[RMDB]
Record summary:
Structure probing data (DMS and 2A3) for a 177-nucleotide construct. Conditions: 150 mM KOAc, 10 mM MgCl2 and 150 mM bicine (pH 8.5), 24 C.
RNA sequence: GGGAACGACUCGAGUAGAGUCGAAAAGGGACGAAUUAAUUAUUAUUGAUCUACUGAAAGAAAUUGAAGCAUCCGAGCAAAUUCAUCCGCUUGUCGUCCUGGAGCUUCUUGCUAAAAAUGAGCAUUACGUGAUUAAUACGUUCGCGUAUUAAUCACGAAAAGAAACAACAACAACAAC
Reactivity to DMS in 0.01 (KOAc 150mM, MgCl2 10mM, bicine 150mM(pH8.5), 24C), signal-to-noise 2, nucleotides 027 to 126: g040g000g000a010c000g000a100a060u000u010a050a080u010u010a130u000u020a150u020u010g000a070u000c060u000a130c070u020g000a080a070a120g020a080a110a060u020u000g030a110a000g030c050a070u000c030c030g000a020g000c020a080a080a120u010u000c110a060u000c180c140g020c020u000u010g020u010c010g020u000c010c000u000g010g020a160g000c060u000u000c050u000u000g020c040u000a030a030a100a100a060u000g000a030g000c110a080u010u000a110
Reactivity to 2A3 in 0.01 (KOAc 150mM, MgCl2 10mM, bicine 150mM(pH8.5), 24C), signal-to-noise 2, nucleotides 027 to 126: g000g000g000a000c010g000a010a060u120u060a150a030u080u160a170u200u080a110u050u150g040a040u070c040u070a070c090u140g070a000a180a080g120a060a170a070u150u110g010a000a020g010c030a110u040c030c040g020a000g000c020a010a080a080u110u100c030a110u080c070c040g010c060u120u060g070u020c010g000u020c000c000u010g000g020a000g030c010u000u000c020u000u070g000c020u060a080a100a130a130a130u260g060a040g010c020a020u000u140a090
For 2A3, 1,215 sequencing reads were counted.